[RMDB]
RNA sequence: GGGAACGACUCGAGUAGAGUCGAAAAUUGAUGUUUGUGUAAUUGAAGUAGGUUUGGGAGGUCUUUUAGACAGCACUAAUGUUAUUUAUCCCAUCCUAACUGGAAUUACUACCAUUGGCAAAGAUCAACCUCUCACGAAAUUCGUUUCGUGAGAGGUAAAAGAAACAACAACAACAAC
Reactivity to 2A3 in 0.01 (KOAc 150mM, MgCl2 10mM, bicine 150mM(pH8.5), 24C), signal-to-noise 1, nucleotides 027 to 126: u000u030g020a040u020g090u070u040u010g060u000g020u030a030a020u020u050g060a030a010g010u010a020g000g030u080u130u090g000g020g000a020g000g040u060c000u000u210u000u020a060g020a000c000a020g100c030a010c160u180a050a110u100g010u100u110a110u090u120u170a030u040c030c000c000a000u000c000c000u070a200a120c020u020g080g010a000a020u010u050a000c020u050a060c060c110a080u090u150g130g000c050a080a000a050g060a000u020c030a020
Reactivity to DMS in 0.01 (KOAc 150mM, MgCl2 10mM, bicine 150mM(pH8.5), 24C), signal-to-noise 2, nucleotides 027 to 126: u000u020g000a030u010g000u000u000u000g000u000g000u000a010a010u000u000g000a280a030g000u000a040g000g000u010u000u000g000g020g000a080g020g000u010c020u000u000u020u030a090g030a050c050a100g020c130a110c240u010a070a070u000g010u020u000a070u000u010u010a160u010c000c000c000a020u000c000c000u000a030a010c040u000g000g020a020a020u010u010a010c060u000a110c100c100a090u000u010g000g010c020a050a010a040g000a050u000c040a090
This 177-nucleotide RNA was probed chemically with 2A3 and DMS. The RNA was probed in 150 mM KOAc, 10 mM MgCl2 and 150 mM bicine (pH 8.5) at 24 C. 2A3 adducts were read by reverse transcription with SuperScript II with manganese.